Chemical mapping of a 177-nucleotide RNA with 2A3 and DMS.

[RMDB]
RNA sequence: GGGAACGACUCGAGUAGAGUCGAAAAGACCGCAGAAGCGGAAACGGCGAAAACGUUCGGAAGAAUACGCACGAGCGGAAGCCUGGAUAGCGACCGAGAGGUCGCAACGCCGAAUCAUCCAGAAGAAGACUAUCGGUCAUUUCGAUGACCGAUAGUCAAAAGAAACAACAACAACAAC
Reactivity to 2A3 in 0.01 (KOAc 150mM, MgCl2 10mM, bicine 150mM(pH8.5), 24C), signal-to-noise 2, nucleotides 027 to 126: g010a010c000c000g000c010a140g120a300a070g010c010g000g020a100a070a030c000g010g000c000g020a000a020a010a140c000g000u020u000c010g070g000a110a000g060a120a280u300a080c090g110c050a050c080g000a000g000c000g000g050a050a030g040c000c000u030g000g010a000u050a000g000c020g000a010c000c000g130a090g040a030g040g000u000c000g000c000a000a000c020g000c010c000g020a010a010u060c010a010u030c030c040a020g050a040a070g060a140a000
Reactivity to DMS in 0.01 (KOAc 150mM, MgCl2 10mM, bicine 150mM(pH8.5), 24C), signal-to-noise 1, nucleotides 027 to 126: g000a250c000c000g070c000a080g010a250a140g010c050g000g000a000a120a150c050g000g000c040g000a170a030a130a110c040g000u000u000c080g080g180a000a090g000a140a140u050a010c300g000c190a200c000g010a160g040c000g000g080a000a010g020c090c000u000g000g000a000u050a040g050c000g000a050c000c000g000a160g000a260g000g000u000c000g000c010a000a000c070g170c010c010g000a090a000u000c100a030u000c060c040a060g000a160a080g000a200a190
The reactions ran in a buffer of 150 mM KOAc, 10 mM MgCl2 and 150 mM bicine (pH 8.5), at 24 C. The 2A3 profile rests on 1,319 reads. DMS (dimethyl sulfate) methylates the pairing face of unpaired adenines and cytosines.